[RMDB]
This 177-nucleotide RNA was probed chemically with 2A3 and DMS. Values cover nucleotides 27 to 126. The reactions ran in a buffer of 150 mM KOAc, 10 mM MgCl2 and 150 mM bicine (pH 8.5), at 24 C. DMS adducts were read by reverse transcription with MarathonRT. 2A3 adducts were read by reverse transcription with SuperScript II with manganese.
RNA sequence: GGGAACGACUCGAGUAGAGUCGAAAAACGCCGGUUACGACCGGCGAUUCAUGUCUGAGUUGGACAGGGGAUCUUGACAGUUUCAUGGUUCGCUGCCAGAUCUAUCUUUCCAGCUCACGCGUGGAAAAAUAUGUGAUGGAUUCGUCCAUCACAUAUUAAAAGAAACAACAACAACAAC
Reactivity to 2A3 in 0.01 (KOAc 150mM, MgCl2 10mM, bicine 150mM(pH8.5), 24C), signal-to-noise 9, nucleotides 027 to 126: a000c020g000c010c010g000g020u060u080a110c240g040a030c060c000g000g000c000g000a000u000u030c000a000u010g080u000c010u010g000a010g000u010u000g000g000a010c010a010g020g010g000g000a000u000c000u040u090g060a160c010a030g030u030u150u190c130a170u190g230g050u170u190c070g000c010u000g010c000c000a000g000a000u000c000u020a300u040c000u020u010u000c000c000a000g000c010u000c000a000c010g000c000g000u010g020g020a050a120a010
Reactivity to DMS in 0.01 (KOAc 150mM, MgCl2 10mM, bicine 150mM(pH8.5), 24C), signal-to-noise 8, nucleotides 027 to 126: a090c020g020c000c010g010g010u000u010a100c190g010a060c010c000g000g000c000g000a000u010u000c000a010u000g010u010c300u000g000a020g010u000u000g000g000a020c050a010g000g010g000g000a010u000c000u020u020g020a030c000a010g010u000u010u010c090a110u020g010g010u010u010c150g000c000u000g000c020c010a010g000a010u000c010u000a080u020c000u000u000u000c000c000a010g000c000u000c000a000c220g000c000g020u000g000g000a010a090a090